[RMDB]
RNA sequence: GGGAACGACUCGAGUAGAGUCGAAAAGAAAGAAAGAAAGAAGCCGGCUCUGCUAGUUUCACGGCAACCACGUUGAAAUUACAACGAAUGAAGCUCGCACUCAACUUCAACGGCUUAACGAGUGCAAAAAAGAAGUAUCACUUCGGUGAUACUUCAAGUGCGCUUAUAAGUUCGCUUAUAAGCGCACAAAAGAAACAACAACAACAAC
Reactivity to 2A3 in 0.01 (KOAc 150mM, MgCl2 10mM, bicine 150mM(pH8.5), 24C), signal-to-noise 2, nucleotides 027 to 156: g000a050a140a000g060a060a080a030g030a070a240a000g110a110a010g090c060c000g030g040c020u030c020u050g000c010u030a070g050u000u030u150c030a020c010g030g030c020a040a060c000c000a060c000g010u010u020g050a140a200a160u150u110a060c060a030a000c040g100a000a090u160g050a040a000g010c040u110c100g000c050a000c000u060c020a080a100c020u110u050c020a110a050c070g060g020c020u110u030a060a030c030g000a000g050u040g000c020a020a020a020a020a020a010g030a000a010g000u000a000u010c000a000c010u050u030c140g060g010u000g000a000u000a020c000u000u000c000a010a000

Chemical mapping of a 207-nucleotide RNA with 2A3. 2A3 adducts were read by reverse transcription with SuperScript II with manganese. The RNA was probed in 150 mM KOAc, 10 mM MgCl2 and 150 mM bicine (pH 8.5) at 24 C.